[RMDB]
RNA sequence: GGGAACGACUCGAGUAGAGUCGAAAACGUAUCCAAUUUCAUUUUUAACGUGACUCGCUUACAAAAAGGUACCAUCUGCUCAGGAGACCAUGACUCCGUAGAACAGGCGGGUUCUGUACACGUGGUGUCGAGCAGACAGACCGCUUUCGUUAACCACCUCUAACACGAGUUUCGACUCGUGUUAGAGAAAAGAAACAACAACAACAAC
Reactivity to DMS in 0.01 (KOAc 150mM, MgCl2 10mM, bicine 150mM(pH8.5), 24C), signal-to-noise 1, nucleotides 027 to 156: c070g000u000a150u000c030c070a070a150u000u000u050c070a100u030u000u000u020u000a040a160c080g040u010g010a060c060u000c020g030c070u020u000a190c080a100a030a070a080a090g010g050u010a050c050c000a190u000c000u000g040c000u010c010a190g000g010a070g000a070c020c100a040u000g030a080c020u010c010c060g000u000a040g010a020a060c000a080g000g050c090g040g000g020u000u000c010u010g020u000a030c060a050c040g040u000g000g070u000g000u020c050g000a120g020c070a090g010a080c030a070g000a140c020c000g000c070u000u000u000c040g030u000u000a080a160c070c000a120c300
Reactivity to 2A3 in 0.01 (KOAc 150mM, MgCl2 10mM, bicine 150mM(pH8.5), 24C), signal-to-noise 2, nucleotides 027 to 156: c020g020u020a070u070c060c120a110a090u130u160u170c110a130u130u100u060u020u210a100a030c030g000u000g010a010c000u000c050g040c030u040u110a050c120a080a050a030a010a030g000g000u040a150c010c000a010u000c020u010g000c000u000c020a030g120g120a040g020a000c000c000a030u030g010a030c050u030c080c030g040u050a020g020a170a040c040a050g090g060c030g040g000g000u060u050c030u040g150u070a000c040a000c140g010u000g020g050u020g110u020c030g000a000g010c010a010g010a020c010a010g040a010c010c010g040c040u050u060u050c020g010u010u050a020a030c000c000a020c010